[RMDB]
RNA sequence: GGGAACGACUCGAGUAGAGUCGAAAAAUGAGGAAACUGAGGUUUAAAAAUUCGAAGUAAAUUGCCAAGGUCCUCAUGGUAGAACUGGGAUUUGAACUUAGAUCUUUUCAACUUCAAAACAUAUGUUUUUUACCGUGGUAUGCUGACUAGCUAUAUGUCGUAUUCUUACAUUCGUGUAAGAAUACGAAAAAGAAACAACAACAACAAC
Reactivity to DMS in 0.01 (KOAc 150mM, MgCl2 10mM, bicine 150mM(pH8.5), 24C), signal-to-noise 2, nucleotides 027 to 156: a060u010g000a060g030g010a120a110a080c080u010g020a300g000g000u020u000u000a020a090a130a090a150u010u010c080g010a140a130g020u000a050a060a090u000u000g020c030c010a140a290g010g010u000c020c020u000c030a030u010g010g010u010a020g000a030a040c020u000g000g010g010a190u010u000u000g010a050a070c030u010u010a110g020a080u000c010u000u010u000u000c020a020a080c020u000u010c020a040a020a040a060c040a090u000a070u010g000u000u010u000u000u010u000a030c010c010g030u000g010g020u010a080u000g010c020u010g000a100c030u010a060g010c040u000a100u000a110u000g000
Reactivity to 2A3 in 0.01 (KOAc 150mM, MgCl2 10mM, bicine 150mM(pH8.5), 24C), signal-to-noise 5, nucleotides 027 to 156: a000u020g010a020g000g030a170a150a020c060u030g010a010g020g070u090u140u230a100a170a050a130a170u240u220c090g000a070a030g010u100a040a080a130u100u080g000c010c010a010a020g010g000u030c000c000u010c010a010u000g010g000u040a020g020a080a030c040u040g020g010g060a050u050u040u090g030a040a030c030u030u050a070g030a150u130c030u080u110u090u100c060a050a040c020u060u040c020a030a080a080a050c020a040u210a040u190g040u020u050u010u010u050u040a060c030c010g020u020g040g000u060a030u110g020c030u020g080a160c050u100a050g020c030u060a050u030a080u300g060
Background:
Structure probing data (DMS and 2A3) for a 207-nucleotide construct. The DMS profile rests on 4,141 reads. It was measured as part of the RMDB library OK3TST. The RNA was probed in 150 mM KOAc, 10 mM MgCl2 and 150 mM bicine (pH 8.5) at 24 C.